[RMDB]
RNA sequence: GGGAACGACUCGAGUAGAGUCGAAAAGCCUGCGGUUUAAUUGGACUCAACGCCGGACAUCUCACCAGCAUCGACAGCAGGAGUGACGAUCAGGUUGAUGACCUUAUCAGACCUGCUGAGAGGAGGUUCACAUUGUAUCCUUCGGGAUACAAUGUGAAAAAGAAACAACAACAACAAC
Reactivity to 2A3 in 0.01 (KOAc 150mM, MgCl2 10mM, bicine 150mM(pH8.5), 24C), signal-to-noise 1, nucleotides 027 to 126: g060c000c000u000g020c030g080g120u040u150u120a120a120u140u180g050g030a040c010u000c190a000a070c100g000c060c000g050g000a030c010a050u050c060u020c010a060c010c060a010g050c000a100u030c020g150a200c010a000g000c000a010g000g000a040g200u060g070a040c070g000a020u010c040a000g000g080u010u040g090a120u210g070a030c010c000u030u000a000u010c010a000g090a100c000c010u000g000c000u030g010a010g020a020g040g040a040g030g000u020
Reactivity to DMS in 0.01 (KOAc 150mM, MgCl2 10mM, bicine 150mM(pH8.5), 24C), signal-to-noise 1, nucleotides 027 to 126: g060c010c010u010g010c000g010g000u000u000u000a070a240u000u000g020g000a070c140u000c000a030a050c100g030c030c100g010g000a060c040a110u000c030u000c030a100c020c030a100g040c140a030u000c170g000a170c080a000g000c000a020g000g020a130g040u000g010a240c130g020a030u000c300a030g010g000u010u020g000a150u100g000a090c000c000u000u000a000u020c020a050g010a050c000c010u000g000c030u000g010a170g000a090g010g000a140g000g000u000
About this RNA: An RNA of 177 nucleotides, treated with 2A3 and DMS and read out base by base. For DMS the reverse transcriptase was MarathonRT. Source: RMDB library RFMREP, as collected in RNAgym. For 2A3, 943 sequencing reads were counted. The RNA was probed in 150 mM KOAc, 10 mM MgCl2 and 150 mM bicine (pH 8.5) at 24 C.